This 177-nucleotide RNA was probed chemically with DMS and 2A3. The data come from the RNA Mapping Database (RMDB), library OK1LIB. For DMS, 1,118 sequencing reads were counted. The reactions ran in a buffer of 150 mM KOAc, 10 mM MgCl2 and 150 mM bicine (pH 8.5), at 24 C.
[RMDB]
RNA sequence: GGGAACGACUCGAGUAGAGUCGAAAAGACAGUGUCGGUUUGGCGCUGAGUCUCUACGACGAGAUCAUCGUCGAGACAACAGAUUCCGGCUUGACGGUGACUGUAGACGGCGAGGGCGGCGACCAGGGUACCGUAGCCCUUUCGAGGGCUACGGUACAAAAGAAACAACAACAACAAC
Reactivity to DMS in 0.01 (KOAc 150mM, MgCl2 10mM, bicine 150mM(pH8.5), 24C), signal-to-noise 1, nucleotides 027 to 126: g000a120c100a210g000u000g000u000c020g060g030u000u120u060g060g020c000g010c000u010g000a180g000u000c000u000c050u000a100c100g030a170c090g020a090g000a050u000c000a060u000c000g000u000c000g000a020g000a000c130a200a150c190a150g020a090u110u000c080c030g000g020c000u000u000g000a000c000g000g060u010g000a030c000u040g010u000a080g020a100c270g020g000c140g000a030g000g000g060c000g010g000c000g000a160c060c040a060g010g010
Reactivity to 2A3 in 0.01 (KOAc 150mM, MgCl2 10mM, bicine 150mM(pH8.5), 24C), signal-to-noise 2, nucleotides 027 to 126: g070a010c070a050g050u050g020u190c040g120g030u080u130u250g100g000c040g000c080u010g000a040g010u000c000u000c000u020a040c020g160a000c040g070a030g040a190u050c000a000u000c050g010u000c000g010a000g000a010c040a170a050c030a170g070a090u190u130c050c040g070g000c020u010u040g010a010c000g000g030u000g000a010c010u070g000u060a030g000a050c180g020g020c020g000a050g020g040g000c000g000g010c000g020a020c000c000a040g070g040
For 2A3 the reverse transcriptase was SuperScript II with manganese.